[RMDB]
The record gives the reactivity of an RNA of 177 nucleotides to 2A3 and DMS.
RNA sequence: GGGAACGACUCGAGUAGAGUCGAAAACCAAUGCCCUCCAUGGCGUUGCGUCAUUCGUCCACGGUCAUGGCUUGCUGGCUAGGUUGGAUGAUUUUGUCAACGACGUCACCACUAAGCUUGUGCCUGGAGAUAAAUAGCGUUUCGACGCUAUUUAUCUAAAAGAAACAACAACAACAAC
Reactivity to 2A3 in 0.01 (KOAc 150mM, MgCl2 10mM, bicine 150mM(pH8.5), 24C), signal-to-noise 6, nucleotides 027 to 126: c000c000a010a040u120g040c020c000c010u050c040c020a040u060g010g020c020g030u040u060g030c040g020u030c040a110u100u080c030g030u010c020c020a030c070g020g010u060c020a050u090g050g040c040u050u120g020c040u030g000g010c020u030a080g100g040u070u050g030g020a110u050g020a030u070u110u100u250g100u080c040a080a030c060g030a000c010g050u020c010a020c020c010a040c020u040a040a020g050c020u070u080g040u050g040c000c010u030g040g050
Reactivity to DMS in 0.01 (KOAc 150mM, MgCl2 10mM, bicine 150mM(pH8.5), 24C), signal-to-noise 8, nucleotides 027 to 126: c020c010a100a090u010g010c030c010c090u010c100c110a090u010g010g010c020g020u000u000g010c110g000u000c080a140u010u000c070g010u000c010c020a060c110g010g010u000c030a040u000g010g010c070u000u010g000c130u010g000g000c020u000a100g010g010u000u010g000g000a110u000g000a030u000u010u010u000g020u000c040a040a120c060g010a040c030g010u000c190a090c030c020a060c060u000a060a070g010c030u000u000g020u000g000c060c010u000g010g010